[RMDB]
RNA sequence: GGGAACGACUCGAGUAGAGUCGAAAAAUUUCUGCAGAAUAAUUCCAGUGGUGCUAUCCAUUUGUACAGUUUGAAUGCCCCACUCCAUUAAUCAGGUUGGACUCACUUAUUACCUGUACAGAGUCAAUCGUCUUAAGUGAUUCGUCACUUAAGACGAAAAAGAAACAACAACAACAAC
Reactivity to DMS in 0.01 (KOAc 150mM, MgCl2 10mM, bicine 150mM(pH8.5), 24C), signal-to-noise 2, nucleotides 027 to 126: a150u010u000u000c030u000g020c060a100g000a080a110u000a030a100u000u010c040c050a080g010u000g010g000u000g010c040u010a070u000c060c040a070u000u010u000g010u000a050c100a060g020u000u010u000g010a070a090u000g000c090c050c010c040a060c070u000c040c050a060u000u010a080a090u010c070a080g000g000u000u010g030g030a080c060u000c020a040c130u000u010a060u020u000a040c080c030u000g000u000a060c110a130g010a040g000u000c080a120a140
Reactivity to 2A3 in 0.01 (KOAc 150mM, MgCl2 10mM, bicine 150mM(pH8.5), 24C), signal-to-noise 2, nucleotides 027 to 126: a060u090u080u010c020u030g040c020a030g080a290a100u070a050a050u150u030c030c010a010g040u040g010g000u030g040c010u040a050u020c020c030a040u020u060u180g040u030a030c030a080g010u030u160u160g170a070a030u060g040c010c000c000c010a020c020u020c060c040a100u050u120a090a100u120c010a020g000g050u100u110g080g010a070c020u000c000a070c040u090u070a080u180u160a150c000c000u000g010u030a050c030a000g050a000g040u040c000a020a040
Record summary
The data come from the RNA Mapping Database (RMDB), library OK2TRN. The record gives the reactivity of an RNA of 177 nucleotides to DMS and 2A3. The 2A3 profile rests on 1,234 reads. As a SHAPE reagent, 2A3 marks flexible, mostly unpaired nucleotides at the ribose 2'-OH. Reactivities are given for positions 27 through 126. The reactions ran in a buffer of 150 mM KOAc, 10 mM MgCl2 and 150 mM bicine (pH 8.5), at 24 C.